[RMDB]
RNA sequence: GGGAACGACUCGAGUAGAGUCGAAAACGUGGCCUUCGGUGCCCCUGACCCUGACAAAUACGGAGAGAUCGUCGCGUGUGCAGUCGUGCUGACGAACGAGGGCAAGCAGGCCCUGCAAAGAGAGGGGCACAACCGUCUUGUUCGCAAGACGGUUGUGAAAAGAAACAACAACAACAAC
Reactivity to DMS in 0.01 (KOAc 150mM, MgCl2 10mM, bicine 150mM(pH8.5), 24C), signal-to-noise 2, nucleotides 027 to 126: c160g010u000g020g010c020c020u000u010c000g020g030u000g010c000c000c030c070u000g000a160c040c020c010u000g020a150c170a050a060a150u010a090c120g000g000a170g020a140g000a120u000c030g020u000c030g000c010g000u000g000u000g000c170a130g010u020c090g000u000g000c060u000g020a060c000g010a070a190c070g000a070g020g020g020c010a080a150g000c120a120g000g010c000c010c000u000g010c100a030a090a080g000a080g000a090g020g000g020g010
Reactivity to 2A3 in 0.01 (KOAc 150mM, MgCl2 10mM, bicine 150mM(pH8.5), 24C), signal-to-noise 1, nucleotides 027 to 126: c080g070u060g090g030c020c000u020u010c000g140g030u070g030c130c010c000c020u070g120a110c000c000c030u070g070a060c030a070a130a010u210a100c090g040g000a010g000a020g020a130u060c020g020u060c000g020c090g000u050g040u070g140c100a100g090u160c020g040u060g000c040u220g050a030c010g080a040a030c010g000a050g000g050g000c030a040a000g070c060a030g000g110c090c000c090u060g050c070a000a120a000g040a040g030a050g000g040g010g050
Record summary:
The data come from the RNA Mapping Database (RMDB), library OK2TRN. Structure probing data (DMS and 2A3) for a 177-nucleotide construct. Values cover nucleotides 27 to 126. The DMS profile rests on 1,217 reads. For DMS the reverse transcriptase was MarathonRT. The 2A3 profile rests on 969 reads.